The record gives the reactivity of an RNA of 207 nucleotides to DMS and 2A3.
Conditions: 150 mM KOAc, 10 mM MgCl2 and 150 mM bicine (pH 8.5), 24 C.
Reactivities are given for positions 27 through 156.
The 2A3 profile rests on 5,720 reads.
In probing experiments dimethyl sulfate is read out at A N1 and C N3, which are open when not base-paired.
The DMS profile rests on 4,169 reads.
RNA sequence: GGGAACGACUCGAGUAGAGUCGAAAAGGGUAGUGCCUGCCAAUACGUUCAGCUUUACUCAUCAAACAAUUUUGCAAGCAAUAGCGGGUAUUGCUCAGAGCAUAGGCGCGGUAGUGAUACCAAGCCGCAACUCGCAAACUCUCACUAUUCAGCCACGCUGGGAAUAAUUUUUCGAAAUUAUUCCCAGAAAAGAAACAACAACAACAAC
Reactivity to DMS in 0.01 (KOAc 150mM, MgCl2 10mM, bicine 150mM(pH8.5), 24C), signal-to-noise 3, nucleotides 027 to 156: g030g030g060u010a060g020u010g000c060c030u010g010c070c020a070a090u010a060c070g010u000u000c080a140g020c020u000u000u000a040c020u000c020a120u010c110a140a100a180c120a060a170u010u010u000u000g030c050a070a090g010c020a040a050u000a040g020c060g020g030g010u010a070u000u010g010c060u020c070a150g020a030g010c030a120u000a260g000g010c000g000c200g050g000u010a020g020u020g000a300u000a030c000c010a040a240g000c000c010g010c020a150a030c010u000c010g000c070a080a050a110c070u000c050u000c020a050c030u000a070u000u000c000a110g030c010c040a050c120g030
Reactivity to 2A3 in 0.01 (KOAc 150mM, MgCl2 10mM, bicine 150mM(pH8.5), 24C), signal-to-noise 7, nucleotides 027 to 156: g020g010g000u020a020g020u010g040c010c010u010g020c020c010a080a070u170a110c050g040u060u110c040a030g010c000u040u070u050a070c030u060c070a110u100c070a130a130a180c120a160a180u120u150u140u220g050c030a040a050g010c010a030a050u020a060g010c030g010g000g000u040a090u050u020g000c010u030c080a030g010a020g000c030a060u100a220g010g010c000g000c020g010g000u010a010g030u020g040a010u020a030c010c000a020a000g000c000c000g000c010a010a010c000u020c010g010c010a050a070a170c030u020c000u010c020a010c030u040a050u080u060c040a020g030c060c000a050c060g030